This 177-nucleotide RNA was probed chemically with 2A3 and DMS. For DMS the reverse transcriptase was MarathonRT. Conditions: 150 mM KOAc, 10 mM MgCl2 and 150 mM bicine (pH 8.5), 24 C. The data come from the RNA Mapping Database (RMDB), library TTRDES. 2A3 adducts were read by reverse transcription with SuperScript II with manganese. For DMS, 1,405 sequencing reads were counted.
RNA sequence: GGGAACGACUCGAGUAGAGUCGAAAAGAUAUGGACCGAUGUGACAUGAUCCGUAUCGGAAACGAUACGAAGAUCAACAGCACACCGGUCCUAAGUCAAAGAACGGGGGUGUUCGCACCCCCGUUCAGUGUUGAGUCAAGUUCGCUUGACUCAACACAAAAGAAACAACAACAACAAC
Reactivity to 2A3 in 0.01 (KOAc 150mM, MgCl2 10mM, bicine 150mM(pH8.5), 24C), signal-to-noise 1, nucleotides 027 to 126: g020a000u000a000u030g000g000a010c020c010g000a040u000g000u000g020a070c140a300u300g000a010u060c010c000g000u000a000u010c000g010g050a000a000a000c000g000a000u020a050c000g080a140a070g000a020u000c060a160a140c110a140g000c000a000c020a020c020c000g090g010u000c000c000u000a000a000g010u010c000a060a060a140g010a000a000c000g000g000g000g020g090u000g020u140u140c140g090c080a040c010c000c040c000c000g000u000u000c000a000
Reactivity to DMS in 0.01 (KOAc 150mM, MgCl2 10mM, bicine 150mM(pH8.5), 24C), signal-to-noise 1, nucleotides 027 to 126: g010a010u000a040u020g010g030a020c010c000g000a020u000g020u010g000a060c060a260u030g010a000u000c020c000g000u000a000u000c000g020g000a010a030a010c000g020a030u000a010c010g000a140a180g010a000u000c010a080a170c300a200g000c000a000c010a000c030c000g000g000u010c000c000u000a000a050g000u000c010a180a170a180g020a000a010c010g010g050g010g020g040u000g000u000u020c210g030c010a000c000c000c000c020c000g000u000u000c000a030